[RMDB]
RNA sequence: GGGAACGACUCGAGUAGAGUCGAAAACGCUCACGGAUUCAAAAACGAUUUCAUCGGUAGUAAUCCUUUUAGAUAAACCGACUCUUUCAAAUUUCUCCAGGGCAUACUGGGCAAUCUUGAUUUUGUGCACGCCCUCAUACUUCGGUAUGAGGGCGUGAAAAGAAACAACAACAACAAC
Reactivity to 2A3 in 0.01 (KOAc 150mM, MgCl2 10mM, bicine 150mM(pH8.5), 24C), signal-to-noise 2, nucleotides 027 to 126: c060g000c060u030c010a040c100g000g000a000u180u000c150a150a250a120a130a000c000g020a000u020u070u300c250a130u050c130g000g040u040a050g140u180a050a010u020c000c000u050u150u050u000a160g000a100u090a020a040a040c020c050g100a070c010u040c020u040u120u000c020a020a020a030u090u030u000c090u000c020c010a040g020g050g050c210a090u250a300c040u120g000g020g100c010a040a050u000c040u060u020g020a080u260u090u040u190g000u050g000
The record gives the reactivity of an RNA of 177 nucleotides to 2A3.
For 2A3 the reverse transcriptase was SuperScript II with manganese.
The data come from the RNA Mapping Database (RMDB), library OK1LIB.
2A3 is a SHAPE reagent: it acylates the 2'-hydroxyl of flexible nucleotides of all four kinds.
The RNA was probed in 150 mM KOAc, 10 mM MgCl2 and 150 mM bicine (pH 8.5) at 24 C.